[RMDB]
This 177-nucleotide RNA was probed chemically with DMS and 2A3. Reactivities are given for positions 27 through 126. The 2A3 profile rests on 4,122 reads. The reactions ran in a buffer of 150 mM KOAc, 10 mM MgCl2 and 150 mM bicine (pH 8.5), at 24 C. For 2A3 the reverse transcriptase was SuperScript II with manganese.
RNA sequence: GGGAACGACUCGAGUAGAGUCGAAAAGAAAACCCGGCGGCGAAUGCGACAUCGCCGAACGGCAGGUUCGUGGUCUCGAUCAGCACCCGGGCGGUCUGCAUGCGUUGGGCGCGGGCCAACGCGAGCGCGCCCGAUAAAGUUUCGACUUUAUCGGGCGAAAAGAAACAACAACAACAAC
Reactivity to DMS in 0.01 (KOAc 150mM, MgCl2 10mM, bicine 150mM(pH8.5), 24C), signal-to-noise 4, nucleotides 027 to 126: g010a130a090a150a130c070c000c000g020g010c090g010g010c010g010a050a070u010g010c090g000a060c110a110u000c010g010c020c010g000a040a040c040g010g010c110a070g000g020u000u000c020g020u010g000g000u000c060u000c050g010a060u010c080a100g000c070a090c050c020c020g010g010g010c050g000g000u010c030u010g020c030a090u000g000c010g000u010u010g010g000g000c080g010c130g000g000g010c010c020a010a030c020g010c010g000a070g020c090g020
Reactivity to 2A3 in 0.01 (KOAc 150mM, MgCl2 10mM, bicine 150mM(pH8.5), 24C), signal-to-noise 3, nucleotides 027 to 126: g010a000a080a020a020c000c000c000g020g000c040g000g000c020g030a110a050u220g070c020g020a040c020a080u020c000g060c050c000g010a070a040c030g090g000c040a030g040g090u060u070c030g040u120g040g020u030c030u030c080g090a170u080c070a030g040c050a060c030c020c000g010g030g020c030g030g040u020c040u060g010c010a060u110g000c020g010u000u050g040g010g060c130g010c040g080g050g000c010c000a010a020c010g020c000g030a040g020c050g000